[RMDB]
RNA sequence: GGGAACGACUCGAGUAGAGUCGAAAAAUCCUCAGGUUCAUAAGCGUGAUGAUUGGGUGUUCAUGCUCCAUGCAUGACAUGUGCCUCCUUGGAACCUUGUUACGACCUUGGCACAUUACCCAUCUGAAAAAGACGUUCGCGUUCGCGCGAACGUCAACGAUAAUCCGUGGUUCGCCACGGAUUAUCGAAAAGAAACAACAACAACAAC
Reactivity to DMS in 0.01 (KOAc 150mM, MgCl2 10mM, bicine 150mM(pH8.5), 24C), signal-to-noise 1, nucleotides 027 to 156: a180u000c000c020u000c060a020g020g030u000u000c020a110u010a080a020g000c060g030u000g040a130u020g010a120u000u000g020g050g050u010g000u000u020c020a040u000g010c010u000c120c180a160u000g000c000a040u000g000a030c300a170u000g020u010g000c020c010u000c080c030u000u000g010g010a040a030c040c070u000u000g020u000u000a170c080g010a080c120c040u000u010g020g000c000a030c030a070u010u000a050c020c000c030a070u010c020u000g000a100a080a130a120a100g010a030c000g060u000u000c000g030c010g000u010u010c300g070c000g000c010g010a010a000c000g010u000c010a000a020
Reactivity to 2A3 in 0.01 (KOAc 150mM, MgCl2 10mM, bicine 150mM(pH8.5), 24C), signal-to-noise 3, nucleotides 027 to 156: a010u040c000c010u020c030a020g000g030u010u010c020a040u170a170a030g050c080g110u120g150a110u080g020a060u150u250g010g010g010u030g080u070u000c010a000u000g000c010u100c200c060a120u300g000c010a010u000g000a000c000a030u000g010u000g000c000c000u000c030c040u010u010g000g000a010a010c000c000u010u140g090u040u080a130c090g030a120c030c050u060u120g000g000c010a000c000a000u040u110a030c010c000c000a000u000c020u040g050a070a040a010a040a040g000a000c000g010u000u010c020g010c000g070u040u040c160g030c000g000c010g030a000a000c000g000u000c000a000a000